[RMDB]
Chemical mapping of a 207-nucleotide RNA with 2A3 and DMS. Reactivities are given for positions 27 through 156. The 2A3 profile rests on 3,315 reads. DMS adducts were read by reverse transcription with MarathonRT. The reactions ran in a buffer of 150 mM KOAc, 10 mM MgCl2 and 150 mM bicine (pH 8.5), at 24 C.
RNA sequence: GGGAACGACUCGAGUAGAGUCGAAAAAACGCGAAAGUCGGACGGCGGCCAUGAGUCGCAACGCAAAGCCGCAGCAAGUGGAGUUAGCGAGAAGAGACUAGGCUUUGGUUUCUUCAAGUGAAGCGGUAAAAGGUUCGAGACUUCGGUCUCGAACCAACGAAGAUAAAAUGUUCGCAUUUUAUCUUCGAAAAGAAACAACAACAACAAC
Reactivity to 2A3 in 0.01 (KOAc 150mM, MgCl2 10mM, bicine 150mM(pH8.5), 24C), signal-to-noise 4, nucleotides 027 to 156: a000a000c160g010c020g030a120a080a010g080u110c060g100g130a140c120g080g010c000g010g020c000c010a300u270g010a040g040u020c000g000c030a020a030c010g020c040a040a050a030g010c010c020g010c010a010g040c050a110a060g060u120g110g070a160g050u130u170a010g040c000g010a020g010a020a000g000a000g010a000c000u030a050g080g010c000u040u050u060g010g000u000u000u010c000u000u010c000a020a010g010u030g060a090a020g000c010g020g010u040a060a080a020a050g010g000u000u010c000g000a000g000a000c000u040u090c220g070g000u000c000u000c000g000a000a000c000c000a000a000
Reactivity to DMS in 0.01 (KOAc 150mM, MgCl2 10mM, bicine 150mM(pH8.5), 24C), signal-to-noise 3, nucleotides 027 to 156: a070a010c030g040c040g000a080a010a090g040u000c030g010g000a170c070g020g000c020g010g030c010c020a200u000g010a210g040u000c010g000c020a040a070c060g000c010a090a110a130g020c000c010g030c010a130g020c050a090a080g010u000g010g010a170g020u000u000a190g010c030g010a300g010a040a030g000a050g000a010c010u000a080g020g000c170u000u000u000g000g000u000u000u010c010u000u010c010a040a300g000u010g000a070a120g020c020g030g000u010a030a030a070a150g000g010u000u000c000g020a030g000a030c030u000u010c290g050g010u000c020u000c000g010a000a000c000c000a010a020